This 177-nucleotide RNA was probed chemically with 2A3 and DMS. DMS adducts were read by reverse transcription with MarathonRT. It was measured as part of the RMDB libraries RFM100 and RFMREP. The RNA was probed in 150 mM KOAc, 10 mM MgCl2 and 150 mM bicine (pH 8.5) at 24 C. Reactivities are given for positions 27 through 126.
[RMDB]
RNA sequence: GGGAACGACUCGAGUAGAGUCGAAAAUCAUUGGCUGUCUGCGUAUCCCCAACUCACAGACGGUCUCUCUAAGCUGGUAGAUCGAAAACCUAAAUACGAACAACUUAAGUUCUGUCGUAGUGGCUCCGUUCGAAAUGUUGUUCGCAACAUUUCGAACAAAAGAAACAACAACAACAAC
Reactivity to 2A3 in 0.01 (KOAc 150mM, MgCl2 10mM, bicine 150mM(pH8.5), 24C), signal-to-noise 2, nucleotides 027 to 126: u100c060a030u020u030g010g000c030u010g010u060c000u060g010c050g030u090a120u110c030c020c000c020a020a050c080u040c020a100c000a050g030a030c020g000g010u000c010u000c000u010c000u170a100a010g010c040u030g070g000u050a080g010a110u050c110g060a030a060a110a150c060c020u070a060a070a000u170a040c100g080a040a020c070a060a010c030u210u250a140a030g030u130u000c030u060g060u040c040g040u060a040g020u000g060g000c010u010c020c030
Reactivity to DMS in 0.01 (KOAc 150mM, MgCl2 10mM, bicine 150mM(pH8.5), 24C), signal-to-noise 2, nucleotides 027 to 126: u030c070a030u050u030g000g010c010u000g030u010c000u000g030c100g040u020a080u010c050c000c000c030a060a140c230u000c030a110c090a060g020a050c070g030g000u000c000u050c060u000c060u000a040a130g010c140u040g010g020u000a010g030a030u020c020g020a080a040a110a110c050c080u040a000a040a080u000a080c040g010a090a030c090a030a090c100u050u020a050a070g000u000u000c100u000g000u000c000g000u000a110g030u000g010g010c050u000c130c290